[RMDB]
Annotation:
Conditions: 150 mM KOAc, 10 mM MgCl2 and 150 mM bicine (pH 8.5), 24 C. The record gives the reactivity of an RNA of 207 nucleotides to DMS and 2A3. Reactivities are rounded to 0.1 and cut off at 0 and 3.
RNA sequence: GGGAACGACUCGAGUAGAGUCGAAAAUUAAGCCAGUUCAGCACGCGACCAAUUUUUUUCCUGCGUGAAAUGUAAAGAUGGUGAAUCGCUUGUGGCCCCUGAAAUGGGUCGGAUGGUCCAACAACCAGGAGUACAAAAAUGUACGGAACGCGGCAGCGGAGUGAUUCGUAUUCGUACGAAUCACUCCAAAAGAAACAACAACAACAAC
Reactivity to DMS in 0.01 (KOAc 150mM, MgCl2 10mM, bicine 150mM(pH8.5), 24C), signal-to-noise 1, nucleotides 027 to 156: u000u000a050a180g010c000c020a100g040u000u000c050a130g000c020a030c050g000c030g010a200c040c040a070a000u000u000u000u000u000u000u000c000c030u000g040c110g010u010g000a040a020a070u000g060u000a110a120a070g020a070u000g010g000u010g010a060a030u000c040g000c080u000u000g030u010g010g000c020c000c030c070u000g000a070a110a120u000g000g020g000u000c000g000g040a030u010g020g000u030c030c010a110a050c080a040a040c010c010a030g000g050a130g000u000a160c090a000a120a060a090a130u000g010u000a070c020g030g010a080a070c070g010c080g090g040c010a090g020c090
Reactivity to 2A3 in 0.01 (KOAc 150mM, MgCl2 10mM, bicine 150mM(pH8.5), 24C), signal-to-noise 2, nucleotides 027 to 156: u090u050a110a010g030c060c010a050g010u090u060c020a030g030c030a050c100g010c010g030a050c030c040a050a020u030u040u000u000u020u030u130c040c010u070g000c080g010u070g090a080a050a040u180g020u090a030a130a030g070a030u080g000g040u090g100a100a010u050c020g070c140u120u100g070u120g110g010c030c020c000c000u050g060a020a040a070u150g000g020g000u000c020g020g100a050u090g050g000u040c020c040a050a010c030a030a000c030c000a010g040g000a020g000u040a070c050a040a050a040a020a020u080g030u060a040c100g000g030a120a010c040g010c010g030g000c030a010g110c080
2A3 adducts were read by reverse transcription with SuperScript II with manganese.